[RMDB]
RNA sequence: GGGAACGACUCGAGUAGAGUCGAAAAUGUAGACAGCAAUGAAAAUUUAACAUGGCCACUUGUUUUAGAAUGCACUAGGGCAUCCACUUCUGCCGUUAAGUUGCAAAAUAAUGAGAUCAAACCUUCACAGCUGCUCCGUUCGCGGAGCAGAAAAGAAACAACAACAACAAC
Reactivity to DMS in 0.01 (KOAc 150mM, MgCl2 10mM, bicine 150mM(pH8.5), 24C), signal-to-noise 3, nucleotides 027 to 129: u030g020u080a100g010a030c020a030g030c150a130a060u040g050a020a050a130a070u000u000u000a040a000c010a000u030g030g030c000c010a090c290u030u030g020u060u020u060u030a090g000a110a100u000g040c070a000c020u040a130g030g000g060c020a020u030c030c010a050c050u000u020c000u060g010c090c060g070u070u010a110a030g010u030u020g050c110a040a030a020a080u070a000a030u030g030a060g010a020u070c080a040a130a110c000c000u030u000c100a000c050a130g000
Reactivity to 2A3 in 0.01 (KOAc 150mM, MgCl2 10mM, bicine 150mM(pH8.5), 24C), signal-to-noise 2, nucleotides 027 to 129: u080g000u000a000g020a130c000a010g000c000a000a070u070g150a000a000a000a120u120u120u030a040a000c010a030u010g020g010c030c040a010c070u030u100g120u020u030u010u030a040g030a300a140u100g010c010a040c000u080a000g010g000g000c010a000u020c000c000a010c000u140u130c040u060g020c000c000g000u030u010a020a000g060u090u040g000c000a150a000a000a000u060a120a090u120g070a020g000a030u110c060a000a000a100c000c000u120u170c080a140c000a010g000
This 170-nucleotide RNA was probed chemically with DMS and 2A3. Values are in units of 0.01, from 0 to 300, in steps of 10. Reactivities are given for positions 27 through 129. For DMS the reverse transcriptase was MarathonRT. The DMS profile rests on 4,999 reads. The reactions ran in a buffer of 150 mM KOAc, 10 mM MgCl2 and 150 mM bicine (pH 8.5), at 24 C. For 2A3 the reverse transcriptase was SuperScript II with manganese.